[RMDB]
RNA sequence: GGGAACGACUCGAGUAGAGUCGAAAAGAAGAGAAGUGAGUAAACGCCUAUUCGGUAUAAGCACAGCCCGUCAAAAGGCGUGCGGCGAGGGCACCAGACGCUGUGCUUAUAACUGGGCCUUCGAAGAGCGGAUAUAGUAGUUCGCUACUAUAUCCGCAAAAGAAACAACAACAACAAC
Reactivity to DMS in 0.01 (KOAc 150mM, MgCl2 10mM, bicine 150mM(pH8.5), 24C), signal-to-noise 2, nucleotides 027 to 126: g020a090a040g000a120g000a060a100g040u000g000a110g000u010a020a080a030c100g000c000c010u020a060u030u010c120g010g010u010a020u000a050a020g000c010a010c000a020g000c060c230c030g010u020c060a170a070a170a080g010g020c090g010u010g000c040g000g010c060g000a090g010g040g020c020a040c000c000a110g010a080c000g000c000u000g000u000g000c000u000u000a000u000a030a030c010u010g000g000g030c020c050u010u000c010g040a090a070g000a250
Reactivity to 2A3 in 0.01 (KOAc 150mM, MgCl2 10mM, bicine 150mM(pH8.5), 24C), signal-to-noise 4, nucleotides 027 to 126: g100a020a010g130a010g020a080a030g050u080g140a020g010u150a080a160a020c070g020c000c000u070a150u050u190c040g010g000u000a030u010a020a000g000c000a000c000a010g000c010c080c030g030u010c030a110a080a010a010g170g020c110g050u020g010c010g080g010c100g030a100g030g070g000c030a040c010c000a020g020a010c010g010c000u000g000u010g000c000u020u000a010u010a010a020c010u020g000g000g000c000c000u040u040c040g070a100a050g020a010